Structure probing data (DMS and 2A3) for a 177-nucleotide construct. The RNA was probed in 150 mM KOAc, 10 mM MgCl2 and 150 mM bicine (pH 8.5) at 24 C. Reactivities are given for positions 27 through 126.

RNA sequence: GGGAACGACUCGAGUAGAGUCGAAAAGAUUCGCGAGCUGAUCGAGACCGGCGGCUACGACCGCGACUUCGUCACGCGCUACACGAAUGCGGCCGAGCUGCUGGACAUGCGCGCCGAAGUCGACACAGACGAUGGCACUAUUCGUAGUGCCAUCGUCAAAAGAAACAACAACAACAAC
Reactivity to DMS in 0.01 (KOAc 150mM, MgCl2 10mM, bicine 150mM(pH8.5), 24C), signal-to-noise 2, nucleotides 027 to 126: g000a150u000u000c020g000c010g000a080g020c040u000g020a140u030c120g030a100g000a180c040c000g020g000c020g010g010c000u000a090c010g030a010c020c040g020c050g010a040c290u000u000c020g030u020c140a200c120g000c040g020c020u000a100c290a080c000g000a110a040u010g010c000g010g010c030c000g020a090g010c020u010g020c010u000g000g000a070c070a070u000g000c000g000c030g020c010c030g000a050a030g000u000c020g020a130c170a100c180a150
Reactivity to 2A3 in 0.01 (KOAc 150mM, MgCl2 10mM, bicine 150mM(pH8.5), 24C), signal-to-noise 2, nucleotides 027 to 126: g030a060u030u060c030g010c040g030a000g000c020u060g090a200u110c080g020a030g140a180c010c050g000g050c000g000g000c010u140a270c070g030a040c000c000g000c010g070a060c110u020u000c000g010u050c030a010c090g140c050g000c070u120a070c030a010c100g040a060a020u210g000c000g000g000c020c010g030a030g000c000u020g000c000u000g000g040a010c010a060u140g000c000g010c020g030c030c050g040a020a030g090u040c010g050a030c020a000c010a110